[RMDB]
Chemical mapping of a 177-nucleotide RNA with DMS and 2A3.
Values are in units of 0.01, from 0 to 300, in steps of 10.
The RNA was probed in 150 mM KOAc, 10 mM MgCl2 and 150 mM bicine (pH 8.5) at 24 C.
For DMS the reverse transcriptase was MarathonRT.
Reactivities are given for positions 27 through 126.
The data come from the RNA Mapping Database (RMDB), library OK2TST.
For 2A3 the reverse transcriptase was SuperScript II with manganese.
RNA sequence: GGGAACGACUCGAGUAGAGUCGAAAAUGGCUCCUGGCGCCCCGCCCACAGCUGACAGGGGCUCAGAAGUGCUAGGGGGACCAUGGGCCACCAGGGCCACCAGGAGGGAGGCAGGUAACGAUGCGAGCGUCGAUUUACUAUUCGUAGUAAAUCGACGAAAAGAAACAACAACAACAAC
Reactivity to DMS in 0.01 (KOAc 150mM, MgCl2 10mM, bicine 150mM(pH8.5), 24C), signal-to-noise 3, nucleotides 027 to 126: u010g020g000c010u000c010c030u000g000g010c150g000c000c010c020c060g020c260c300c010a050c060a050g000c030u000g000a060c090a300g030g010g000g000c300u000c020a020g000a050a030g010u000g020c050u000a300g020g000g010g010g000a070c020c020a040u000g000g010g000c010c020a050c060c070a100g010g010g000c030c050a090c050c020a070g000g010a110g010g020g010a070g010g000c030a030g000g000u000a070a080c130g020a070u000g000c100g000a120g000
Reactivity to 2A3 in 0.01 (KOAc 150mM, MgCl2 10mM, bicine 150mM(pH8.5), 24C), signal-to-noise 1, nucleotides 027 to 126: u030g020g010c000u000c020c010u020g000g010c040g290c000c010c010c010g000c000c020c000a040c010a020g090c030u030g020a030c020a130g170g000g120g010c050u010c000a000g010a080a010g040u030g040c040u120a090g000g000g010g000g050a000c020c010a030u030g000g040g000c000c000a000c010c010a010g020g090g000c020c010a020c010c020a040g030g020a070g070g030g010a030g060g000c030a030g090g030u020a110a010c050g020a030u100g060c050g070a040g040